[RMDB]
RNA sequence: GGGAACGACUCGAGUAGAGUCGAAAAGGGGUGCCAGGUUGGGCUUAGGCACAUUUGCAGAGCAUCAAGGUAUAUUCCUAGAGCCUUAUGGGGUUAAAGUUGUAAAAUACUGAGGAAAUUGCAUGCACUAAGAGCCAAAGUUCGCUUUGGCUCUUAGAAAAGAAACAACAACAACAAC
Reactivity to DMS in 0.01 (KOAc 150mM, MgCl2 10mM, bicine 150mM(pH8.5), 24C), signal-to-noise 3, nucleotides 027 to 126: g010g010g010g020u010g010c020c020a090g010g000u010u010g020g020g030c080u000u000a070g030g010c020a040c080a130u010u010u010g000c040a050g010a180g010c020a030u010c060a040a260g010g000u000a040u000a160u010u000c000c020u000a140g000a110g020c010c020u010u000a100u000g020g010g010g010u010u000a060a080a050g010u000u020g000u020a060a070a100a030u010a010c020u000g000a180g010g000a070a060a090u000u000g010c050a070u000g000c090a190

Conditions: 150 mM KOAc, 10 mM MgCl2 and 150 mM bicine (pH 8.5), 24 C. Structure probing data (DMS) for a 177-nucleotide construct. Reactivities are given for positions 27 through 126.